[RMDB]
Chemical mapping of a 177-nucleotide RNA with DMS and 2A3. The reactions ran in a buffer of 150 mM KOAc, 10 mM MgCl2 and 150 mM bicine (pH 8.5), at 24 C.
RNA sequence: GGGAACGACUCGAGUAGAGUCGAAAAUUAAAUCCGGGAAGUAGUGAGACCCCUACCGAAAGGGACAGGUGCCGAAAGCACAGGAAGGAAGGGUCAAGAACAGGUCAGUGAUGCCCUCAGAUGGUCUCCCUGUCUAGAUAUUCGUAUCUAGACAGGGAAAAGAAACAACAACAACAAC
Reactivity to DMS in 0.01 (KOAc 150mM, MgCl2 10mM, bicine 150mM(pH8.5), 24C), signal-to-noise 4, nucleotides 027 to 126: u020u060a050a140a110u020c040c010g010g000g020a070a110g010u000a060g040u000g020a120g000a050c020c010c040c010u000a080c050c000g000a100a070a150g010g000g020a050c090a090g000g030u000g000c010c020g040a100a120a200g000c020a030c040a020g020g000a060a040g010g010a300a090g000g000g020u030c040a050a110g030a140a050c110a030g000g000u010c010a030g040u020g000a110u000g010c010c020c000u000c050a060g010a070u030g000g030u010c040u010
Reactivity to 2A3 in 0.01 (KOAc 150mM, MgCl2 10mM, bicine 150mM(pH8.5), 24C), signal-to-noise 4, nucleotides 027 to 126: u200u110a070a030a040u050c050c000g010g040g010a050a040g030u180a000g050u040g050a040g040a030c010c000c020c010u030a040c020c050g130a110a030a060g000g000g080a050c070a090g060g020u030g000c020c050g150a100a070a000g000c010a010c010a020g080g020a040a030g020g020a000a080g000g000g050u030c040a000a010g030a060a020c020a020g030g040u050c010a000g000u030g130a040u080g060c000c010c000u030c020a070g030a150u060g020g040u000c010u000